[RMDB]
RNA sequence: GGGAACGACUCGAGUAGAGUCGAAAAUAGGGACAGAAAAUGGAAAGAUUAAGCUGUAUACAUUCGCCAAAUUAAAAACCGCAAAAAUCAAGGGGAUGAAUACUAUUAUACUCCUUGCCAAACUGUCUAGAGUCGAAAUAUUCGUAUUUCGACUCUAAAAAGAAACAACAACAACAAC
Reactivity to 2A3 in 0.01 (KOAc 150mM, MgCl2 10mM, bicine 150mM(pH8.5), 24C), signal-to-noise 1, nucleotides 027 to 126: u110a050g040g010g020a010c040a020g120a100a230a040a000u080g030g040a010a030a150g000a020u030u050a030a000g090c030u020g080u020a010u010a090c040a010u020u040c080g040c080c040a010a010a150u060u110a030a110a110a170a090c060c090g000c130a020a060a100a000a190u160c040a100a110g010g020g000g010a000u020g030a000a030u100a100c020u010a040u180u010a050u070a100c020u000c060c020u000u010g000c020c000a070a200a110c020u020g010u000c060
Reactivity to DMS in 0.01 (KOAc 150mM, MgCl2 10mM, bicine 150mM(pH8.5), 24C), signal-to-noise 2, nucleotides 027 to 126: u020a130g000g020g020a040c000a030g000a050a040a130a090u020g000g000a060a090a080g020a090u010u010a040a140g020c060u010g000u010a030u010a080c030a050u000u000c050g020c020c030a070a080a140u010u000a030a040a040a070a140c140c160g000c180a040a110a070a070a060u000c060a040a070g010g020g000g000a060u000g000a090a020u000a060c060u010a080u000u000a040u010a130c090u000c070c010u000u000g020c110c010a020a060a220c050u010g000u000c020
Structure probing data (2A3 and DMS) for a 177-nucleotide construct. The DMS profile rests on 1,194 reads. For 2A3 the reverse transcriptase was SuperScript II with manganese. Source: RMDB library OK2TST, as collected in RNAgym. For DMS the reverse transcriptase was MarathonRT.